[RMDB]
RNA sequence: GGGAACGACUCGAGUAGAGUCGAAAAGGUCACCGGUCAGGCGGUUCCGUCCCACGGCGGUGACCAGCCCGAAAUCGCGCCCCGCGGUCAUAGCGGCGGUGCUCCGGUAGCAGUUCGAGGAGCCCCGGUAACAAUCAGUCUUCGGACUGAUUGUUACAAAAGAAACAACAACAACAAC
Reactivity to 2A3 in 0.01 (KOAc 150mM, MgCl2 10mM, bicine 150mM(pH8.5), 24C), signal-to-noise 8, nucleotides 027 to 126: g020g010u020c000a000c010c010g020g220u150c040a040g000g070c030g060g040u210u220c100c050g090u160c050c020c000a010c050g040g010c000g000g020u000g000a010c000c000a000g000c000c000c000g030a060a070a050u190c080g000c000g020c040c000c010c000g010c020g020g050u140c080a120u110a120g030c010g050g000c050g000g010u010g000c000u010c010c010g070g010u060a040g020c060a040g050u110u100c050g060a070g010g020a010g010c000c010c000c010g030
Reactivity to DMS in 0.01 (KOAc 150mM, MgCl2 10mM, bicine 150mM(pH8.5), 24C), signal-to-noise 4, nucleotides 027 to 126: g000g020u000c000a000c000c010g000g000u020c050a180g020g010c050g000g020u010u020c150c050g010u030c020c020c030a150c200g000g010c010g000g000u000g000a000c000c020a050g010c010c020c010g010a040a070a040u030c090g020c030g030c000c010c020c020g020c020g000g000u010c190a090u030a160g010c030g000g040c120g000g010u010g010c010u010c060c030g020g010u000a060g020c050a110g000u010u000c080g020a150g020g000a090g000c030c040c010c050g010